[RMDB]
RNA sequence: GGGAACGACUCGAGUAGAGUCGAAAAAUAACACUCAAGGCAAAACCGGGCAAAAGCAUCCUUAUGCAUAAUCACGUUGCAGGAAGCGUUAGUAAGGUGCUUUACAAGGCGAUUUACGGCCCCUUUAAUGGCGACAAGAUCAUCAACUUGCAGUGCCAACACUUAACACGUUCGCGUGUUAAGUGUUAAAAGAAACAACAACAACAAC
Reactivity to DMS in 0.01 (KOAc 150mM, MgCl2 10mM, bicine 150mM(pH8.5), 24C), signal-to-noise 3, nucleotides 027 to 156: a100u010a100a120c050a080c060u000c030a080a060g000g030c010a110a050a150a110c040c010g010g030g020c050a080a060a010a080g020c010a050u000c020c000u000u000a070u000g030c120a130u000a130a180u010c100a110c040g030u000u000g010c050a160g000g000a130a050g020c050g010u000u000a120g000u000a010a020g000g050u000g040c000u010u000u000a030c070a040a100g020g020c000g010a120u000u000u000a090c030g000g020c000c000c030c030u010u000u000a060a090u010g010g030c030g000a050c020a100a050g030a100u000c070a130u000c070a030a080c020u000u000g030c040a080g020u000g000c030c030
Reactivity to 2A3 in 0.01 (KOAc 150mM, MgCl2 10mM, bicine 150mM(pH8.5), 24C), signal-to-noise 5, nucleotides 027 to 156: a000u080a030a010c030a010c030u080c050a040a020g060g000c040a040a040a050a210c040c060g020g030g000c070a030a040a000a000g000c000a040u200c010c000u030u040a020u070g000c030a060u140a190a070u230c020a000c050g040u020u070g060c100a070g020g150a120a050g030c000g020u040u060a020g000u010a010a010g000g010u010g000c000u050u030u020a100c070a050a010g020g010c030g050a020u070u030u130a050c030g070g000c000c000c010c010u040u130u170a130a050u150g000g010c010g000a070c040a020a040g020a060u100c050a020u040c030a120a080c020u010u030g020c070a040g030u010g110c010c010
Overview
The record gives the reactivity of an RNA of 207 nucleotides to DMS and 2A3. For 2A3, 3,318 sequencing reads were counted. Values are in units of 0.01, from 0 to 300, in steps of 10. The reactions ran in a buffer of 150 mM KOAc, 10 mM MgCl2 and 150 mM bicine (pH 8.5), at 24 C.